RNA sequence: GGGAACGACUCGAGUAGAGUCGAAAAACAUGUCUAUUUCGAUAGACAUGUGUAGGCCGUGAUCGUAUAGUGGUUAGUACUCUGCGUUGUGGCCGCAGCAACCUCGGUUCGAAUCCGAGUCACGGCACCAGCUUCCACUCUUGUUCGCAAGAGUGGAGGAUUAUCACCAGUUCGCUGGUGAUAAUCCAAAAGAAACAACAACAACAAC
Reactivity to DMS in 0.01 (KOAc 150mM, MgCl2 10mM, bicine 150mM(pH8.5), 24C), signal-to-noise 2, nucleotides 027 to 156: a030c010a000u000g030u000c000u010a000u000u000u010c200g000a030u000a000g010a010c000a010u030g030u010g000u000a040g000g050c000c000g030u000g010a000u000c020g000u000a060u000a040g060u010g090g030u000u000a050g020u000a030c000u000c010u000g000c010g060u000u000g060u000g030g020c270c040g040c070a030g020c120a040a040c070c000u000c000g000g010u010u000c050g000a300a060u020c000c000g000a030g000u000c000a040c000g000g000c000a070c000c020a080g000c110u000u000c000c000a010c010u000c000u000u000g010u000u000c280g030c040a010a010g030a020g030u000g010g000a000
Reactivity to 2A3 in 0.01 (KOAc 150mM, MgCl2 10mM, bicine 150mM(pH8.5), 24C), signal-to-noise 3, nucleotides 027 to 156: a000c000a000u000g000u020c000u010a020u010u140u070c190g100a010u010a000g000a000c000a010u000g010u000g030u080a090g120g000c000c000g000u000g010a000u010c000g010u010a000u000a020g100u160g070g240u160u030a010g010u010a000c000u000c000u010g010c000g040u080u120g160u190g180g030c030c000g000c000a000g000c000a000a010c000c000u000c000g000g010u010u010c000g000a000a010u010c000c000g000a000g000u010c000a000c000g030g000c010a020c000c010a010g050c040u060u010c000c000a000c000u000c000u020u020g040u100u080c220g030c100a000a000g000a000g000u000g000g000a000